The record gives the reactivity of an RNA of 177 nucleotides to 2A3 and DMS. Conditions: 150 mM KOAc, 10 mM MgCl2 and 150 mM bicine (pH 8.5), 24 C.

RNA sequence: GGGAACGACUCGAGUAGAGUCGAAAAAAAUCCACGAAGCUGAGGAUGACGUGGUGGGAACGUAAUCAUUUGGGCAAAAUACCGUCCUACGCCUGACAGUCAGCUGUUAAGGAAAUGCGUAGAUGAACGAAUAGAUGCUAUUCGUAGCAUCUAUUCGAAAAGAAACAACAACAACAAC
Reactivity to 2A3 in 0.01 (KOAc 150mM, MgCl2 10mM, bicine 150mM(pH8.5), 24C), signal-to-noise 9, nucleotides 027 to 126: a000a000a020u020c030c000a040c040g020a060a010g020c050u070g040a020g090g040a100u060g020a030c020g020u030g010g050u050g020g020g010a070a040c050g030u100a060a050u060c060a090u040u070u100g030g010g010c030a050a040a040a060u120a080c040c030g030u040c010c010u010a020c030g010c000c010u010g020a000c000a000g030u090c030a050g060c060u010g010u040u040a110a030g070g000a080a090a080u140g010c030g020u030a020g020a130u120g050a060a020
Reactivity to DMS in 0.01 (KOAc 150mM, MgCl2 10mM, bicine 150mM(pH8.5), 24C), signal-to-noise 9, nucleotides 027 to 126: a040a050a060u010c010c000a090c090g010a120a080g010c040u000g000a060g010g010a090u010g010a130c090g020u010g010g020u000g010g010g000a090a050c100g010u000a060a050u010c070a070u000u000u000g000g010g010c080a050a030a060a090u000a100c130c050g000u000c050c020u000a050c070g020c010c030u010g000a070c070a050g010u010c160a100g020c020u000g010u000u000a040a070g010g000a050a060a080u010g010c030g010u000a030g010a090u000g000a060a170

Overview: For 2A3, 22,651 sequencing reads were counted. The DMS profile rests on 19,149 reads. For 2A3 the reverse transcriptase was SuperScript II with manganese.